Structure probing data (DMS and 2A3) for a 177-nucleotide construct.
The reactions ran in a buffer of 150 mM KOAc, 10 mM MgCl2 and 150 mM bicine (pH 8.5), at 24 C.
For DMS the reverse transcriptase was MarathonRT.
It was measured as part of the RMDB libraries RFM100 and RFMREP.
RNA sequence: GGGAACGACUCGAGUAGAGUCGAAAAGACACCAUUCCAGCGGACCACUGUGAUCCAAGAGGCAUUCAGCCAUCAUGAUGUGGCCUUUACCUCCACUCCUGUCUUGUUCUACACAGAUUCAGCACAGGUGACGUCAUAUGUUCGCAUAUGACGUCACAAAAGAAACAACAACAACAAC
Reactivity to DMS in 0.01 (KOAc 150mM, MgCl2 10mM, bicine 150mM(pH8.5), 24C), signal-to-noise 3, nucleotides 027 to 126: g030a130c080a070c040c010a110u020u030c070c010a130g000c060g000g000a090c000c040a100c090u000g010u010g000a040u020c060c110a070a050g000a030g020g000c010a070u020u040c110a150g000c000c010a030u010c050a160u030g010a120u010g040u000g000g000c030c070u000u000u020a090c170c000u000c020c060a100c080u000c000c040u010g000u020c040u010u030g020u000u000c090u000a070c150a080c100a090g000a060u000u040c070a020g030c150a060c140a040g020
Reactivity to 2A3 in 0.01 (KOAc 150mM, MgCl2 10mM, bicine 150mM(pH8.5), 24C), signal-to-noise 5, nucleotides 027 to 126: g040a020c020a030c040c010a020u120u050c030c010a030g040c030g030g040a050c000c000a060c050u060g030u040g050a080u070c030c020a060a050g060a030g110g000c010a020u090u090c060a090g000c000c000a040u030c060a070u150g080a060u070g040u050g090g000c000c000u040u070u060a090c020c020u010c020c010a020c020u000c010c000u020g020u040c000u060u040g020u070u030c020u100a050c040a010c020a050g100a090u080u050c030a010g050c040a030c010a070g010